[RMDB]
RNA sequence: GGGAACGACUCGAGUAGAGUCGAAAAGCUAUAGCCGCGCGGCUACGAUGCCGAUAUUAAUUAGCCGCGUACGAUAUGCUAUAAUCGAUGCUAGCCGAUUAUAAUGCGCUAUAGCUAAUCGUACGCGCGAAUAUGGGGCAUUCGUGCCCCAUAUUCGAAAAGAAACAACAACAACAAC
Reactivity to DMS in 0.01 (KOAc 150mM, MgCl2 10mM, bicine 150mM(pH8.5), 24C), signal-to-noise 3, nucleotides 027 to 126: g010c000u000a020u010a010g010c060c160g000c080g010c060g000g010c000u000a040c240g010a130u020g010c050c040g000a050u000a100u010u010a090a150u020u010a100g020c090c000g010c000g030u010a010c000g000a030u000a080u010g010c080u000a010u000a040a030u000c010g000a120u000g010c110u000a080g020c080c010g000a090u000u000a050u010a030a070u020g020c040g010c010u000a000u000a020g000c010u000a060a020u000c020g000u000a020c000g010c010g030
Reactivity to 2A3 in 0.01 (KOAc 150mM, MgCl2 10mM, bicine 150mM(pH8.5), 24C), signal-to-noise 3, nucleotides 027 to 126: g010c010u020a000u010a020g080c100c050g020c040g010c030g030g000c010u040a090c120g130a070u170g010c040c020g030a030u020a050u140u160a180a120u090u110a010g070c030c000g010c000g020u010a000c000g020a000u070a040u300g040c030u030a020u060a130a000u020c010g040a030u090g090c040u040a010g040c020c000g000a010u000u070a080u130a140a160u230g000c020g000c000u000a000u000a040g000c000u010a010a020u000c000g000u020a020c000g000c000g000